Structure probing data (2A3 and DMS) for a 177-nucleotide construct.

RNA sequence: GGGAACGACUCGAGUAGAGUCGAAAAGAUAUGGAUGAGAACUACAGCGGGAGGAGCGUUGAAAUCGGAAACGAUGGAGCUCCUAACGCUGCUCAUCCUAAGUCAAACUUACGGUUCGCCGUAAGAAGUCCUGAACAAUGUUCGCAUUGUUCAGGACAAAAGAAACAACAACAACAAC
Reactivity to 2A3 in 0.01 (KOAc 150mM, MgCl2 10mM, bicine 150mM(pH8.5), 24C), signal-to-noise 2, nucleotides 027 to 126: g070a030u130a050u110g000g010a020u010g010a020g000a110a080c160u160a050c300a010g000c030g010g020g000a030g020g000a010g010c000g200u300u040g030a040a030a000u000c000g050g080a090a000a060c000g020a020u010g000g030a010g000c000u000c000c000u000a010a000c000g000c000u000g000c000u000c000a010u000c000c000u020a050a010g000u000c030a020a060a120c000u000u000a010c010g120g000u060u040c300g050c100c000g020u020a010a000g020a020a020
Reactivity to DMS in 0.01 (KOAc 150mM, MgCl2 10mM, bicine 150mM(pH8.5), 24C), signal-to-noise 1, nucleotides 027 to 126: g020a060u010a300u000g000g010a000u010g040a030g020a070a040c110u020a300c000a010g010c000g010g000g030a130g000g010a030g000c000g000u010u000g000a110a150a010u010c010g010g000a120a080a220c000g030a000u000g000g000a120g030c000u010c000c000u000a030a000c000g000c000u000g010c010u000c010a000u010c000c000u010a000a040g010u050c050a140a100a100c010u000u000a020c020g010g010u000u000c240g000c000c010g040u000a010a010g000a060a170

The reactions ran in a buffer of 150 mM KOAc, 10 mM MgCl2 and 150 mM bicine (pH 8.5), at 24 C.
Reactivities are given for positions 27 through 126.
The DMS profile rests on 1,014 reads.